An RNA of 177 nucleotides, treated with DMS and 2A3 and read out base by base.
[RMDB]
RNA sequence: GGGAACGACUCGAGUAGAGUCGAAAACUCCCCAAGAGGCCAUCCCCAAGGGAGCUCAUGCUGCGGGGCCCUGAGCAAGCCCUCUGCUGGCGCCUAUCAAACGACACAGGCCUGAUCCUCGCGGACCUCAUCAGACCCUAUUCGUAGGGUCUGAUGAAAAAGAAACAACAACAACAAC
Reactivity to DMS in 0.01 (KOAc 150mM, MgCl2 10mM, bicine 150mM(pH8.5), 24C), signal-to-noise 3, nucleotides 027 to 126: c150u010c020c010c000c130a110a110g000a120g000g010c030c020a120u000c030c000c030c050a150a120g000g000g000a050g030c030u020c060a070u040g030c060u010g020c130g030g000g000g040c030c010c030u000g010a100g010c260a180a260g000c040c010c000u010c010u000g000c010u000g000g000c010g000c030c020u010a120u010c100a040a100a150c100g010a040c070a050c050a140g000g000c010c020u000g000a110u010c030c010u020c050g000c080g000g000a070c080c030
Reactivity to 2A3 in 0.01 (KOAc 150mM, MgCl2 10mM, bicine 150mM(pH8.5), 24C), signal-to-noise 6, nucleotides 027 to 126: c030u060c010c000c000c000a080a040g020a050g080g000c020c010a060u050c010c010c010c040a040a070g030g000g000a040g010c020u050c070a060u150g020c020u030g040c060g030g000g010g000c000c000c010u050g010a050g010c010a020a020g000c000c000c000u020c020u030g010c020u030g020g020c020g030c010c000u090a120u120c060a080a080a050c060g040a010c020a010c010a080g000g040c000c010u020g020a040u020c010c010u020c020g010c010g030g010a060c010c000

The RNA was probed in 150 mM KOAc, 10 mM MgCl2 and 150 mM bicine (pH 8.5) at 24 C.